[RMDB]
RNA sequence: GGGAACGACUCGAGUAGAGUCGAAAAACAUGUAGCAAUGUUAUAGAUGAAUCAGGUCAUUUACCAAAUAAUAUCGUUUCUUCUUAUAUUAAGGAUAUGGACGGUGUGAAAAUACUAUUCGUUGCAGCCAAGCGGUUCGGUUCGCCGAACCGCUUGGAAAAGAAACAACAACAACAAC
Reactivity to 2A3 in 0.01 (KOAc 150mM, MgCl2 10mM, bicine 150mM(pH8.5), 24C), signal-to-noise 1, nucleotides 027 to 126: a000c020a000u070g070u230a070g000c020a020a000u060g000u290u090a050u050a050g000a000u040g070a110a050u120c000a000g000g030u050c140a050u000u050u050a240c140c050a000a130a000u240a140a000u000a000u000c000g000u030u300u000c000u130u030c000u130u100a160u000a020u210u120a200a000g000g000a000u000a000u300g000g000a000c140g000g060u000g000u090g210a050a000a180a000u160a170c000u000a000u010u010c000g000u000u000g000c000a000g000
Chemical mapping of a 177-nucleotide RNA with 2A3. The RNA was probed in 150 mM KOAc, 10 mM MgCl2 and 150 mM bicine (pH 8.5) at 24 C. As a SHAPE reagent, 2A3 marks flexible, mostly unpaired nucleotides at the ribose 2'-OH. Source: RMDB library OK1LIB, as collected in RNAgym. For 2A3 the reverse transcriptase was SuperScript II with manganese. Reactivities are given for positions 27 through 126.